[RMDB]
RNA sequence: GGGAACGACUCGAGUAGAGUCGAAAAGGUGUCCUGCGCCAUUUCAUCGAGUGUGCGCGUUACGCGCCAGUUCAGUUCACGGUCGGCUUUGCUGGCGUCCGCCCAGUAGGCCGGAAGGUCGCCCUCGAGAUGAGACAUCGUUCGCGAUGUCUCAUCUAAAAGAAACAACAACAACAAC
Reactivity to DMS in 0.01 (KOAc 150mM, MgCl2 10mM, bicine 150mM(pH8.5), 24C), signal-to-noise 2, nucleotides 027 to 126: g010g000u000g000u000c080c050u000g020c110g000c020c000a090u000u020u000c130a150u010c190g000a020g020u000g030u000g010c020g010c010g020u000u010a060c200g030c040g020c010c040a050g010u000u000c100a070g020u010u000c070a080c070g000g040u010c030g000g000c010u000u010u000g040c030u000g020g010c030g030u010c210c120g000c160c000c010a060g000u000a060g020g000c020c010g000g030a090a070g020g030u010c000g030c030c010c020u020c110g010
Reactivity to 2A3 in 0.01 (KOAc 150mM, MgCl2 10mM, bicine 150mM(pH8.5), 24C), signal-to-noise 1, nucleotides 027 to 126: g110g030u030g010u090c030c030u050g010c030g010c000c030a100u130u200u170c080a110u140c030g000a030g010u090g070u130g020c020g000c000g020u030u050a050c130g020c000g020c000c000a030g030u050u110c030a020g010u110u070c050a020c070g090g040u080c030g000g000c000u040u270u090g000c000u000g030g000c030g010u050c030c000g000c020c000c000a060g040u090a040g000g000c000c000g000g050a020a020g070g000u040c030g000c000c040c020u010c030g070

Chemical mapping of a 177-nucleotide RNA with DMS and 2A3.
For DMS the reverse transcriptase was MarathonRT.
Source: RMDB library OK2TST, as collected in RNAgym.
The reactions ran in a buffer of 150 mM KOAc, 10 mM MgCl2 and 150 mM bicine (pH 8.5), at 24 C.
Values cover nucleotides 27 to 126.